[RMDB]
RNA sequence: GGGAACGACUCGAGUAGAGUCGAAAACUGGAUACUGGAUUCUGGAGCUCAAUACAAAAACUCUGAACUCCUCAGUAAGACAUACAGGUGUCAUCAGUAGAAUGGCUCCCAAAAUAAGCAGAUGAAGACAGAGUCAUGUAUUCGUACAUGACUCUGUAAAAGAAACAACAACAACAAC
Reactivity to 2A3 in 0.01 (KOAc 150mM, MgCl2 10mM, bicine 150mM(pH8.5), 24C), signal-to-noise 2, nucleotides 027 to 126: c000u030g020g010a040u080a110c030u050g090g020a130u240u040c030u110g000g000a000g000c010u000c080a070a060u120a160c050a040a270a050a080a060c060u050c040u050g000a010a000c010u010c020c020u020c010a020g040u020a090a030g110a030c010a020u220a070c030a040g170g040u040g020u010c030a050u000c010a030g180u080a040g140a160a050u030g000g010c020u030c000c010c000a040a100a030a100u100a080a020g080c080a010g110a200u100g040a090a040g050
Reactivity to DMS in 0.01 (KOAc 150mM, MgCl2 10mM, bicine 150mM(pH8.5), 24C), signal-to-noise 2, nucleotides 027 to 126: c050u000g000g020a150u000a070c050u000g020g040a170u030u010c070u000g000g020a030g030c010u020c050a040a080u020a230c180a040a040a120a070a120c290u000c070u000g020a040a060c030u010c020c020u000c050a040g020u010a050a130g020a110c040a090u000a080c160a040g000g030u010g020u000c010a050u010c010a080g010u000a060g010a160a070u000g000g010c070u000c010c000c020a020a080a040a080u030a060a030g010c060a070g010a080u010g010a100a090g020
An RNA of 177 nucleotides, treated with 2A3 and DMS and read out base by base. For DMS the reverse transcriptase was MarathonRT. For DMS, 1,247 sequencing reads were counted. Source: RMDB library OK2TST, as collected in RNAgym.